[RMDB]
RNA sequence: GGGAACGACUCGAGUAGAGUCGAAAACAAACGUCGUCGAGUUAUUGUUGAUGAUUCCAGCGAUGAUGAAUCUAUCGUCAUUAGUAAUGCCGAUGAUGUGCGCGAAUCAGAUGAUAGAAUCGCGGUUGAACGUAAAAGAUCAGCUUUAACUACGCCGACUCGCUUAAGAGUUCGCUCUUAAGCGAGUAAAAGAAACAACAACAACAAC
Reactivity to DMS in 0.01 (KOAc 150mM, MgCl2 10mM, bicine 150mM(pH8.5), 24C), signal-to-noise 3, nucleotides 027 to 156: c040a080a090a150c100g020u000c020g040u000c020g020a110g030u000u000a030u010u000g000u000u000g010a070u010g010a100u000u000c010c020a180g030c020g020a090u000g000a240u010g020a160a240u010c030u000a020u000c000g050u000c010a100u000u020a090g000u000a050a130u000g020c040c030g010a120u030g000a160u000g030u010g030c060g020c040g010a090a130u000c110a070g010a050u000g010a100u020a050g000a110a130u000c040g010c010g010g010u000u020g000a030a070c080g020u000a070a090a120a200g000a090u000c020a040g030c020u000u000u000a010a070c020u000a100c040g060c020c010g010
Reactivity to 2A3 in 0.01 (KOAc 150mM, MgCl2 10mM, bicine 150mM(pH8.5), 24C), signal-to-noise 5, nucleotides 027 to 156: c030a000a070a020c050g060u030c010g000u000c020g050a010g010u000u020a000u000u020g000u010u000g010a020u020g020a080u070u050c020c030a090g020c010g010a030u100g020a090u130g120a090a140u040c000u010a020u010c010g020u000c020a100u030u100a010g040u080a050a060u070g010c020c050g100a180u210g080a070u150g260u220g040c050g000c010g040a020a050u110c060a110g000a020u010g010a010u020a010g020a040a020u010c000g000c000g040g000u030u120g060a090a030c080g030u150a030a060a070a040g170a030u010c000a000g000c000u010u000u000a000a000c010u160a130c000g000c000c000g010

An RNA of 207 nucleotides, treated with DMS and 2A3 and read out base by base. The DMS profile rests on 4,975 reads. Values are in units of 0.01, from 0 to 300, in steps of 10. DMS adducts were read by reverse transcription with MarathonRT. The reactions ran in a buffer of 150 mM KOAc, 10 mM MgCl2 and 150 mM bicine (pH 8.5), at 24 C. Source: RMDB library OK3TST, as collected in RNAgym. Reactivities are given for positions 27 through 156.